[RMDB]
RNA sequence: GGGAACGACUCGAGUAGAGUCGAAAAAAAUACUAUGCUUUUCUUAAUAAGCACUUUUCUAUGAUGAUACUGUCUGAUGACGGUGUCGUUUGCUAUAAUAGUGAUUAUGCAGCUAAGGGUUACAUUGGACGCCACGUGUUCGCACGUGGCAAAAGAAACAACAACAACAAC
Reactivity to 2A3 in 0.01 (KOAc 150mM, MgCl2 10mM, bicine 150mM(pH8.5), 24C), signal-to-noise 2, nucleotides 027 to 129: a000a000a000u220a000c080u080a120u070g010c020u170u040u000u000c010u090u160a090a090u130a060a010g070c000a000c000u080u100u010u070c110u110a080u060g010a010u010g000a000u000a000c010u000g000u000c000u050g190a090u260g020a020c010g000g000u020g000u010c010g010u000u000u060g000c020u030a010u010a200a010u000a000g000u000g030a010u010u010a020u070g070c040a000g020c030u020a110a010g070g030g000u010u010a040c060a100u070u200g010g080a000c050
Reactivity to DMS in 0.01 (KOAc 150mM, MgCl2 10mM, bicine 150mM(pH8.5), 24C), signal-to-noise 2, nucleotides 027 to 129: a020a010a000u030a010c000u000a180u010g000c060u040u000u010u020c140u030u030a000a000u000a050a030g030c030a000c110u080u000u000u000c060u030a050u030g000a030u000g010a020u000a010c010u000g020u000c040u020g050a160u080g000a010c020g010g000u020g020u000c000g000u000u010u080g000c280u110a040u020a010a040u010a040g030u030g030a030u000u030a020u040g000c170a000g000c010u050a110a070g010g030g070u000u000a020c190a000u030u010g000g000a270c190
Structure probing data (2A3 and DMS) for a 170-nucleotide construct.
Values cover nucleotides 27 to 129.
The reactions ran in a buffer of 150 mM KOAc, 10 mM MgCl2 and 150 mM bicine (pH 8.5), at 24 C.